[RMDB]
This 177-nucleotide RNA was probed chemically with 2A3 and DMS. The reactions ran in a buffer of 150 mM KOAc, 10 mM MgCl2 and 150 mM bicine (pH 8.5), at 24 C. For 2A3 the reverse transcriptase was SuperScript II with manganese. The DMS profile rests on 12,358 reads. DMS adducts were read by reverse transcription with MarathonRT.
RNA sequence: GGGAACGACUCGAGUAGAGUCGAAAAGAAACGCUGAUUACCUUGCUGAGGUAGCGAAAAAGGACGAACGCGGAAGCAUCGAAACGCGGAUGCGAGUCCUGAGCACCGAGCGGUGGGAGCGGAAGAAGGGAAUUACUAUGUUCGCAUAGUAAUUCCCAAAAGAAACAACAACAACAAC
Reactivity to 2A3 in 0.01 (KOAc 150mM, MgCl2 10mM, bicine 150mM(pH8.5), 24C), signal-to-noise 7, nucleotides 027 to 126: g070a010a060a000c020g000c010u030g040a300u060u090a040c020c010u080u210g000c000u020g030a100g200g030u110a210g030c020g050a060a110a040a030a000g020g000a010c020g030a300a050c020g010c000g000g000a000a010g010c010a030u200c160g180a130a050a040c120g000c000g000g000a000u020g000c000g000a020g000u010c000c000u010g000a000g000c000a000c000c000g000a010g000c010g020g010u000g010g030g020a020g000c010g020g040a040a040g060a070a090
Reactivity to DMS in 0.01 (KOAc 150mM, MgCl2 10mM, bicine 150mM(pH8.5), 24C), signal-to-noise 6, nucleotides 027 to 126: g010a090a090a150c010g000c020u010g000a220u030u020a040c020c000u030u050g030c020u030g020a180g020g010u000a080g060c010g000a070a080a110a140a030g010g000a010c020g010a150a080c000g000c000g000g000a300a110g010c030a080u030c260g020a030a130a150c200g000c000g020g000a300u030g000c000g020a130g000u000c000c000u000g010a130g010c010a030c000c000g010a120g020c040g000g020u000g010g010g010a030g020c010g000g000a080a060g000a080a140